Chemical mapping of a 177-nucleotide RNA with 2A3 and DMS. The data come from the RNA Mapping Database (RMDB), library OK2TRN. For DMS the reverse transcriptase was MarathonRT. As a SHAPE reagent, 2A3 marks flexible, mostly unpaired nucleotides at the ribose 2'-OH. The RNA was probed in 150 mM KOAc, 10 mM MgCl2 and 150 mM bicine (pH 8.5) at 24 C. Values cover nucleotides 27 to 126. For 2A3, 1,310 sequencing reads were counted.

RNA sequence: GGGAACGACUCGAGUAGAGUCGAAAAUUCGAUGCCAAAGUAACCGGAAGCGCCUUUGAGUGUGUGAGCGGUUCGCGAUAACGUUUUCCUAUCGUCGGAUUCGAUCGCUUUUCGCAUUUGGCUGAGCCCAGUGCGGAAGUUUCGACUUCCGCACUGGAAAAGAAACAACAACAACAAC
Reactivity to 2A3 in 0.01 (KOAc 150mM, MgCl2 10mM, bicine 150mM(pH8.5), 24C), signal-to-noise 2, nucleotides 027 to 126: u130u050c030g020a000u060g000c010c000a050a010a010g070u020a110a030c060c000g000g080a090a010g030c010g030c030c070u280u300u300g140a200g080u180g000u000g030u030g040a100g100c010g040g000u080u000c030g000c020g010a010u030a100a080c050g000u010u010u050u050c000c000u040a130u120c040g130u050c040g020g010a020u140u050c030g050a030u000c010g000c000u060u110u030u050c030g000c070a100u080u030u000g000g030c040u060g010a030g000c000
Reactivity to DMS in 0.01 (KOAc 150mM, MgCl2 10mM, bicine 150mM(pH8.5), 24C), signal-to-noise 2, nucleotides 027 to 126: u000u020c030g000a140u000g000c000c030a020a030a080g020u010a040a060c140c010g010g010a150a300g010c010g000c040c020u000u020u050g010a110g030u000g020u000g010u000g010a190g040c060g020g010u000u000c060g020c010g020a020u000a030a080c100g000u000u000u010u000c050c030u000a030u000c060g010u010c190g000g000a010u010u000c090g000a040u000c060g000c040u000u000u020u010c030g000c060a300u010u010u000g000g030c010u010g000a260g000c130